RNA sequence: GGGAACGACUCGAGUAGAGUCGAAAAGCAGCCAGGAACAAGGCGAUUGUCCUUUCCGUCGAAUGCUGGCGCGACGAAAUCAAUCUGGAGCUGACCUGCCCGGCCGGCGACUACUGGGAAGACUGGCUCACCAUGUUGAUUUCGAUCAACAUGGUGAAAAAGAAACAACAACAACAAC
Reactivity to 2A3 in 0.01 (KOAc 150mM, MgCl2 10mM, bicine 150mM(pH8.5), 24C), signal-to-noise 3, nucleotides 027 to 126: g010c070a020g040c020c020a000g060g000a060a070c080a070a000g040g000c080g140a250u120u250g130u140c020c000u010u030u050c050c030g000u020c010g040a100a090u150g020c010u010g040g000c020g020c000g030a020c030g020a050a010a060u150c080a050a060u030c050u050g050g000a040g020c030u030g060a080c000c020u020g020c010c010c040g030g030c010c000g010g040c000g060a040c030u130a030c040u050g040g040g010a050a010g020a040c020u020g000g000c020
Reactivity to DMS in 0.01 (KOAc 150mM, MgCl2 10mM, bicine 150mM(pH8.5), 24C), signal-to-noise 4, nucleotides 027 to 126: g030c060a080g000c000c000a080g020g030a080a100c180a080a040g000g020c070g010a140u000u000g000u000c030c050u000u000u000c100c030g000u000c010g000a040a060u000g010c000u000g000g010c050g010c010g000a070c030g010a050a040a060u010c120a040a050u010c040u000g010g010a210g010c020u000g000a100c050c020u000g030c050c020c020g010g030c020c050g000g000c060g000a100c100u010a060c090u010g010g000g000a080a040g000a130c030u010g000g000c110
Background
Conditions: 150 mM KOAc, 10 mM MgCl2 and 150 mM bicine (pH 8.5), 24 C. Chemical mapping of a 177-nucleotide RNA with 2A3 and DMS. The DMS profile rests on 3,940 reads. For 2A3, 3,189 sequencing reads were counted. Reactivities are rounded to 0.1 and cut off at 0 and 3. It was measured as part of the RMDB library OK2TST. 2A3 is a SHAPE reagent: it acylates the 2'-hydroxyl of flexible nucleotides of all four kinds.